The data come from the RNA Mapping Database (RMDB), library M2PK50. An RNA of 177 nucleotides, treated with DMS and 2A3 and read out base by base. For DMS the reverse transcriptase was MarathonRT. 2A3 adducts were read by reverse transcription with SuperScript II with manganese. For DMS, 2,158 sequencing reads were counted.
RNA sequence: GGGAACGACUCGAGUAGAGUCGAAAAGCGACUACCUUCGGGUAGUCGCAAAUAAAUUCAGCGGUAAUUCGAGGCGAAAUAUUACCGGUGAUCGCCUCGAAAAAAGCCUAGACUUCGGUCUAGGCAACUUAGUAGUCUGGUUCGCCAGACUACUAAGAAAAGAAACAACAACAACAAC
Reactivity to DMS in 0.01 (KOAc 150mM, MgCl2 10mM, bicine 150mM(pH8.5), 24C), signal-to-noise 2, nucleotides 027 to 126: g010c000g010a010c000u010a000c010c000u010u000c170g100g040g010u000a000g020u000c000g000c020a010a010a020u000a050a130a120u000u010c070a080g020c070g000g030u010a080a170u000u000c000g010a010g050g000c010g010a020a040a090u000a140u000u020a120c040c030g000g000u000g000a120u000c020g000c000c000u000c010g000a010a020a050a110a060a100g000c000c000u000a000g000a020c010u000u020c200g030g000u000c010u000a000g010g000c000a000a020
Reactivity to 2A3 in 0.01 (KOAc 150mM, MgCl2 10mM, bicine 150mM(pH8.5), 24C), signal-to-noise 2, nucleotides 027 to 126: g020c020g010a010c010u000a000c010c000u030u050c170g070g000g000u000a000g000u020c010g000c010a000a000a000u010a000a000a020u100u030c000a010g070c030g120g010u090a110a150u030u030c010g010a000g000g010c010g000a040a040a010u170a060u130u090a090c070c040g080g000u030g000a010u000c000g000c000c000u010c000g000a000a000a000a000a000a000g000c010c000u000a010g000a000c010u030u040c300g060g000u000c000u000a000g000g010c000a000a000